[RMDB]
RNA sequence: GGGAACGACUCGAGUAGAGUCGAAAAGAUAUGGAAUCCCACGGUAGCUGUUGUCGGAAACGACGAUAGCUAUAAUCGUGUGAGAUUCCUAAGUCAAAACAUCUCAUUAGUUCGCUAAUGAGAUGAAGCCCCGUAUCUAGUUCGCUAGAUACGGGGCAAAAGAAACAACAACAACAAC
Reactivity to 2A3 in 0.01 (KOAc 150mM, MgCl2 10mM, bicine 150mM(pH8.5), 24C), signal-to-noise 1, nucleotides 027 to 126: g010a000u050a030u070g000g000a000a010u000c040c000c000a010c000g020g230u300a000g010c000u020g000u060u020g000u040c040g030g090a030a010a030c010g060a000c040g020a050u000a000g060c010u000a010u060a050a020u020c000g000u020g060u170g020a300g010a150u000u010c010c000u010a070a000g030u030c000a000a000a040a100c010a010u000c010u000c020a010u010u020a010g020u080u020c290g020c170u000a000a000u000g000a010g000a010u000g010a040a000